[RMDB]
The record gives the reactivity of an RNA of 177 nucleotides to 2A3.
RNA sequence: GGGAACGACUCGAGUAGAGUCGAAAAAGAAGCGUACCGAGCGCGCACUAUUUCGGCUUACCUAUCUUCGUGGGUCCGGUUCGAUCCGCGCGGUCAGAAUGUCUCAAUUCGAGUAAUCAAUUGUGCAGUGCUUUGCCGUCUUCGGACGGCAAAGCACAAAAGAAACAACAACAACAAC
Reactivity to 2A3 in 0.01 (KOAc 150mM, MgCl2 10mM, bicine 150mM(pH8.5), 24C), signal-to-noise 1, nucleotides 027 to 126: a000g270a120a010g000c020g100u080a060c010c000g030a010g000c080g040c000g170c040a000c080u030a280u020u110u110c000g000g000c000u030u030a090c020c020u010a040u130c030u110u130c110g020u010g000g030g000u000c000c030g260g050u050u220c100g000a010u020c000c000g020c000g000c030g050g000u000c000a000g000a100a060u110g150u080c040u000c100a000a000u050u210c010g000a010g030u120a010a010u040c000a000a000u010u010g000u050g070c010a040
Values cover nucleotides 27 to 126.
The data come from the RNA Mapping Database (RMDB), library RFM100.
As a SHAPE reagent, 2A3 marks flexible, mostly unpaired nucleotides at the ribose 2'-OH.